The record gives the reactivity of an RNA of 177 nucleotides to 2A3 and DMS.
[RMDB]
RNA sequence: GGGAACGACUCGAGUAGAGUCGAAAAGUAAAUCAAAAUAAGAGAAGUCAAGGCUGAGAUUCCAAAGGAAAAGAAGGUAGGAUAUUGUCACUGGUUAACCGUAACCACCACCACCAAAAUAAAAAAACUAACUGUUAUUGUUCGCAAUAACAGUUAGAAAAGAAACAACAACAACAAC
Reactivity to 2A3 in 0.01 (KOAc 150mM, MgCl2 10mM, bicine 150mM(pH8.5), 24C), signal-to-noise 2, nucleotides 027 to 126: g070u090a040a080a080u130c070a000a020a060a130u160a140a050g100a010g060a100a000g040u020c020a020a040g000g000c030u050g000a020g030a130u090u000c030c020a120a030a070g050g030a060a080a020a020g030a040a010g070g010u090a070g020g040a020u030a080u130u190g050u050c040a010c100u010g020g030u020u000a060a020c030c020g040u020a010a030c000c000a010c000c000a010c000c010a010c000c100a030a020a110a040u260a030a160a010a010a000a010a020
Reactivity to DMS in 0.01 (KOAc 150mM, MgCl2 10mM, bicine 150mM(pH8.5), 24C), signal-to-noise 2, nucleotides 027 to 126: g030u010a080a090a110u000c030a050a060a040a090u030a100a130g000a090g020a050a050g010u000c050a080a060g010g000c040u000g030a090g000a090u010u000c050c070a050a130a080g010g000a050a020a070a060g010a070a040g000g030u000a040g030g000a100u000a080u010u010g030u010c060a040c080u010g000g000u000u000a060a090c150c110g000u020a020a030c030c020a060c050c050a060c060c010a050c100c050a020a030a070a060u090a000a010a050a050a040a060a130
The data come from the RNA Mapping Database (RMDB), library M2PK90. 2A3 adducts were read by reverse transcription with SuperScript II with manganese. For 2A3, 1,434 sequencing reads were counted. For DMS the reverse transcriptase was MarathonRT. Conditions: 150 mM KOAc, 10 mM MgCl2 and 150 mM bicine (pH 8.5), 24 C.